[RMDB]
Chemical mapping of a 177-nucleotide RNA with 2A3.
Reactivities are given for positions 27 through 126.
The data come from the RNA Mapping Database (RMDB), library OK1LIB.
Conditions: 150 mM KOAc, 10 mM MgCl2 and 150 mM bicine (pH 8.5), 24 C.
RNA sequence: GGGAACGACUCGAGUAGAGUCGAAAAUCUUCGUCCUUCUCUUCUGCGGAUGCGUGAGCUCGCUGUGCGGCCAAGUGGUUGCCUAUCCAACAGCGCUUGUCCGUACGCGCAUCCAAGUCGACGGCGGGCUGCCGUGCGAUUUCGAUCGCACGGCAGCAAAAGAAACAACAACAACAAC
Reactivity to 2A3 in 0.01 (KOAc 150mM, MgCl2 10mM, bicine 150mM(pH8.5), 24C), signal-to-noise 2, nucleotides 027 to 126: u060c020u100u070c020g060u080c000c010u120u010c030u010c000u090u030c020u050g050c090g070g000a010u020g000c000g020u040g040a020g040c040u040c040g020c080u110g010u010g000c020g000g000c020c000a020a000g040u040g060g070u060u010g010c000c060u100a150u160c070c040a080a070c010a040g060c030g000c030u010u000g000u000c000c000g000u010a020c030g010c000g000c000a000u000c000c010a030a040g040u020c060g040a070c050g010g010c020g030g040